[RMDB]
RNA sequence: GGGAACGACUCGAGUAGAGUCGAAAAUGGGUACCGAUCAUGUCCAUGGCUAGAUGCUAGCAUGUCUCGUACCACAUGGUAUCUGAUCCGUCCAUGCUCUCAUAGUACCUAGUGCUAGUCUCUAGGAGCUAUACGUAGACUUCGGUCUACGUAUAGCAAAAGAAACAACAACAACAAC
Reactivity to DMS in 0.01 (KOAc 150mM, MgCl2 10mM, bicine 150mM(pH8.5), 24C), signal-to-noise 5, nucleotides 027 to 126: u000g010g000g020u010a040c040c150g010a050u010c040a130u000g000u000c040c040a070u010g010g010c090u000a050g010a120u000g030c040u000a050g000c050a080u010g010u000c080u000c140g010u000a030c040c170a160c040a000u000g010g010u020a040u000c120u000g010a030u000c020c210g010u020c020c010a020u010g010c160u000c030u000c070a130u010a100g020u000a120c020c030u000a050g000u000g010c030u000a070g010u020c060u000c000u000a020g000g020a260
Reactivity to 2A3 in 0.01 (KOAc 150mM, MgCl2 10mM, bicine 150mM(pH8.5), 24C), signal-to-noise 4, nucleotides 027 to 126: u050g030g010g030u050a040c030c030g020a020u050c010a010u080g040u000c040c010a050u040g070g000c020u040a070g010a160u110g050c010u020a000g020c040a110u110g020u030c030u000c110g000u020a050c030c030a030c020a070u050g010g020u140a060u050c040u040g010a030u010c010c030g010u000c020c000a010u020g010c010u010c010u040c030a060u070a130g070u090a120c010c020u010a010g000u010g030c050u060a090g070u080c010u000c000u020a020g020g000a030